[RMDB]
RNA sequence: GGGAACGACUCGAGUAGAGUCGAAAACGUCCCCACAUAGCAGUUCCCAGGACCCCCUUCUAAAAUGACCGAGAGGGGGUGCUAGGAACACGGGGGCCCAGUGGAGCCAUGGGAUGCUCCUCCCGAUGAAGCACUACCUUCGGGUAGUGCAAAAGAAACAACAACAACAAC
Reactivity to 2A3 in 0.01 (KOAc 150mM, MgCl2 10mM, bicine 150mM(pH8.5), 24C), signal-to-noise 5, nucleotides 027 to 129: c070g090u060c000c010c020c000a050c040a030u160a020g110c110a060g000u000u000c000c000c000a000g020g060a000c020c000c020c010c000u050u000c020u090a010a040a150a180u240g110a060c090c140g110a130g000a030g100g000g000g000g000u000g000c010u000a000g000g000a000a000c000a020c010g030g000g020g010g000c020c010c020a010g020u020g030g010a000g020c090c130a300u230g080g040g050a080u160g000c010u030c020c000u010c000c000c000g040a030u140g070a080a060
Reactivity to DMS in 0.01 (KOAc 150mM, MgCl2 10mM, bicine 150mM(pH8.5), 24C), signal-to-noise 2, nucleotides 027 to 129: c280g060u100c030c000c050c000a180c160a120u110a120g000c230a160g010u020u010c000c010c100a030g010g030a050c050c020c000c000c000u120u000c050u080a020a010a030a010u090g020a130c190c180g030a110g000a080g000g000g000g030g000u000g020c040u000a070g000g020a020a000c000a010c130g000g000g000g000g000c000c080c030a140g010u030g000g000a020g020c030c100a140u000g020g020g010a300u040g000c010u010c030c030u010c020c020c020g000a160u000g010a110a100
An RNA of 170 nucleotides, treated with 2A3 and DMS and read out base by base. For 2A3, 6,943 sequencing reads were counted. The DMS profile rests on 7,165 reads. For 2A3 the reverse transcriptase was SuperScript II with manganese.